[RMDB]
RNA sequence: GGGAACGACUCGAGUAGAGUCGAAAACUACGUCGCGAUUUGGACGCCAGAACCAUGUUUGUUCAAAUCUUCGGUCCGCAAGGAGAGAAGCUCUUUGGCAAACACCUUCCUUUCAACUGGGGUGCGCGGUUAGGAUAAGGUUCGCCUUAUCCUAACCAAAAGAAACAACAACAACAAC
Reactivity to 2A3 in 0.01 (KOAc 150mM, MgCl2 10mM, bicine 150mM(pH8.5), 24C), signal-to-noise 4, nucleotides 027 to 126: c020u070a030c030g090u060c020g020c040g130a140u080u090u240g090g030a020c020g000c040c030a030g030a040a030c040c040a080u060g040u010u030u000g090u160u240c020a060a050a300u300c000u020u010c040g190g060u010c000c000g000c030a030a040g000g000a010g020a000g000a030a010g000c010u010c010u040u010u010g000g000c000a000a010a000c000a010c000c010u040u050c010c000u060u130u100c050a110a110c030u030g000g020g000g050u050g020c100g030c030
Reactivity to DMS in 0.01 (KOAc 150mM, MgCl2 10mM, bicine 150mM(pH8.5), 24C), signal-to-noise 3, nucleotides 027 to 126: c070u000a120c080g000u000c020g030c120g000a150u000u000u010g000g010a050c060g010c050c030a030g010a090a160c130c140a090u000g000u010u000u010g010u000u000c000a010a020a010u010c000u000u000c000g010g000u000c000c000g000c300a100a100g010g000a030g000a290g000a060a000g010c030u000c010u000u010u000g000g000c000a000a020a010c010a060c190c090u000u010c020c030u000u000u000c200a060a100c080u010g010g000g000g010u010g000c030g010c130

Background:
Structure probing data (2A3 and DMS) for a 177-nucleotide construct. For 2A3, 3,307 sequencing reads were counted. The DMS profile rests on 2,270 reads. DMS adducts were read by reverse transcription with MarathonRT. Source: RMDB library RFMREP, as collected in RNAgym. The RNA was probed in 150 mM KOAc, 10 mM MgCl2 and 150 mM bicine (pH 8.5) at 24 C.